Source: RMDB library OK3TST, as collected in RNAgym. Structure probing data (2A3 and DMS) for a 207-nucleotide construct. For DMS the reverse transcriptase was MarathonRT. 2A3 adducts were read by reverse transcription with SuperScript II with manganese. The reactions ran in a buffer of 150 mM KOAc, 10 mM MgCl2 and 150 mM bicine (pH 8.5), at 24 C.

RNA sequence: GGGAACGACUCGAGUAGAGUCGAAAAGCAAAAAAGCAAUCCGGCGUCAAUCUGGAUACGCAUAAAAUAAACAUCAACUACAUAAGGGAAGUCAAUCAAUGUUAACUCUGAUUAUUGCUUUUUUAAUGCUGUUCAUAGGCUAUCACGUUGGCGCGGCCUCCAUUACGUUGUUCGCAACGUAAUGGAGAAAAGAAACAACAACAACAAC
Reactivity to 2A3 in 0.01 (KOAc 150mM, MgCl2 10mM, bicine 150mM(pH8.5), 24C), signal-to-noise 4, nucleotides 027 to 156: g030c020a030a010a070a050a000a000g020c030a020a040u020c040c050g170g030c020g080u010c010a020a060u040c090u250g080g000a030u090a050c150g020c010a040u220a080a130a020a040u170a040a070a010c030a050u100c030a020a050c030u180a030c060a090u100a050a060g040g010g030a020a030g050u080c020a020a040u050c020a030a120u170g040u090u110a080a080c060u010c020u140g060a090u030u160a020u050u070g020c000u070u020u010u010u020u130a060a080u080g010c040u020g030u130u020c070a090u170a080g000g070c010u020a000u020c020a010c100g020u020u010g000g000c010g000c000g010g000c010
Reactivity to DMS in 0.01 (KOAc 150mM, MgCl2 10mM, bicine 150mM(pH8.5), 24C), signal-to-noise 2, nucleotides 027 to 156: g010c030a000a050a020a100a060a040g010c040a070a050u000c020c020g010g030c020g010u000c050a050a080u020c070u020g050g020a000u000a030c170g020c020a070u000a090a090a040a100u010a080a060a050c080a070u000c060a050a110c020u070a020c030a060u000a020a140g010g000g010a020a050g030u000c100a040a110u000c040a060a100u010g030u000u020a030a100c080u000c060u010g010a160u000u000a040u000u000g000c000u020u000u000u000u000u000a110a110u000g000c010u000g030u000u010c030a040u010a060g050g030c010u010a030u000c030a030c100g000u000u020g000g000c020g010c000g090g020c130